[RMDB]
RNA sequence: GGGAACGACUCGAGUAGAGUCGAAAAUAGCCUUUUUUGAUGAGGCUGGUAAUCAAAUUAGCAUCUCAUCUGAAGAAGAUUCUGAGACGUUUACCGUAGACAGGGGAAAAGUAAUUUCCUCAGGGAAGCAUUAGGUACUAUUCGUAGUACCUAAUGCAAAAGAAACAACAACAACAAC
Reactivity to DMS in 0.01 (KOAc 150mM, MgCl2 10mM, bicine 150mM(pH8.5), 24C), signal-to-noise 8, nucleotides 027 to 126: u010a090g020c070c010u000u000u000u010u000u000g000a060u000g000a020g000g020c080u010g010g010u000a050a050u010c210a070a080a300u000u000a020g010c040a070u000c010u010c020a050u010c070u010g020a050a050g010a100a070g000a040u000u000c050u000g000a040g010a150c070g010u000u000u000a070c020c030g020u010a080g000a130c140a110g010g000g000g010a020a020a040a200g010u020a090a120u000u000u000c000c000u000c010a100g010g000g000a090a100
Reactivity to 2A3 in 0.01 (KOAc 150mM, MgCl2 10mM, bicine 150mM(pH8.5), 24C), signal-to-noise 6, nucleotides 027 to 126: u120a030g040c010c000u050u040u030u030u130u130g060a060u030g010a010g020g000c060u030g000g040u100a090a100u130c110a130a100a130u050u020a040g040c010a110u030c000u010c030a060u020c050u120g050a050a040g020a050a010g000a050u110u000c030u110g030a020g000a010c000g000u010u030u060a300c010c000g000u020a050g070a160c060a090g020g010g010g020a020a030a010a030g120u180a040a300u020u010u000c000c000u000c010a010g080g040g030a090a040